This 177-nucleotide RNA was probed chemically with DMS and 2A3. 2A3 is a SHAPE reagent: it acylates the 2'-hydroxyl of flexible nucleotides of all four kinds. DMS (dimethyl sulfate) methylates the pairing face of unpaired adenines and cytosines. It was measured as part of the RMDB library OK2TRN.

RNA sequence: GGGAACGACUCGAGUAGAGUCGAAAACGUUGACGCACAGCCAAGGUGCCUGGACAUUCUAGAAGCAGAUGGUGCAAGGUUUCCUGCGGGCCGAUUGGCGUGCUUGUGGAAGCUGGCUGAUCCUGCACGAUGCGAUGAUCUUCGGAUCAUCGCAUCGAAAAGAAACAACAACAACAAC
Reactivity to DMS in 0.01 (KOAc 150mM, MgCl2 10mM, bicine 150mM(pH8.5), 24C), signal-to-noise 2, nucleotides 027 to 126: c140g010u000u000g030a050c110g010c060a030c070a160g020c060c060a040a100g020g020u000g000c010c020u000g010g010a170c150a040u020u010c030u000a170g000a090a160g030c010a010g000a070u010g000g030u000g000c040a090a060g000g030u000u030u000c050c000u010g030c050g010g000g000c050c030g000a300u000u000g010g000c030g000u020g040c000u000u030g010u030g020g030a080a110g000c020u000g020g060c010u000g010a090u000c050c040u000g000c090a160
Reactivity to 2A3 in 0.01 (KOAc 150mM, MgCl2 10mM, bicine 150mM(pH8.5), 24C), signal-to-noise 1, nucleotides 027 to 126: c050g050u060u090g050a000c030g040c010a040c030a100g020c000c010a040a000g030g000u040g030c000c010u020g040g060a090c020a100u120u000c030u300a120g030a300a020g030c020a010g030a160u190g000g080u070g000c050a060a060g030g000u020u090u090c020c030u100g000c090g030g000g030c010c030g280a300u020u170g050g000c030g020u000g110c040u060u100g080u040g080g010a000a010g000c020u020g090g040c000u110g030a030u000c010c010u020g000c060a040

DMS adducts were read by reverse transcription with MarathonRT.